[RMDB]
RNA sequence: GGGAACGACUCGAGUAGAGUCGAAAACUACGAAUCUCUACAGCGCGUAUCAACGAUCGCAGACGACAGAUAACACCCAGUCAAAUCAACAGCAUGUCGUCAACAGUGCCGAGAACAUGCCGGUGAAGCCAUGCGACCUAUUCGUAGGUCGCAUGGCAAAAGAAACAACAACAACAAC
Reactivity to DMS in 0.01 (KOAc 150mM, MgCl2 10mM, bicine 150mM(pH8.5), 24C), signal-to-noise 1, nucleotides 027 to 126: c000u000a120c260g040a060a030u000c060u000c110u000a130c070a120g080c090g000c120g010u010a060u000c140a110a100c120g020a100u010c030g020c030a140g070a020c020g000a060c030a060g010a070u000a030a060c170a000c010c000c020a060g000u020c190a050a110a190u030c140a090a170c190a110g030c050a060u000g000u000c000g000u000c040a070a050c190a080g000u000g000c030c000g010a130g020a050a080c010a030u030g010c040c030g030g000u000g030a160a080
Reactivity to 2A3 in 0.01 (KOAc 150mM, MgCl2 10mM, bicine 150mM(pH8.5), 24C), signal-to-noise 1, nucleotides 027 to 126: c000u020a020c010g030a050a060u040c060u000c000u100a060c090a040g050c040g050c010g050u170a110u200c050a070a110c110g030a020u050c000g020c070a010g010a050c000g000a020c020a000g050a010u010a060a080c060a030c020c070c000a000g110u100c070a090a000a080u120c070a080a070c030a000g120c030a060u020g020u000c000g000u020c000a000a030c080a050g060u130g000c020c010g110a090g010a080a030c070a000u000g000c030c000g080g030u030g030a040a000

An RNA of 177 nucleotides, treated with DMS and 2A3 and read out base by base. For DMS the reverse transcriptase was MarathonRT. Reactivities are given for positions 27 through 126. Conditions: 150 mM KOAc, 10 mM MgCl2 and 150 mM bicine (pH 8.5), 24 C. For 2A3 the reverse transcriptase was SuperScript II with manganese.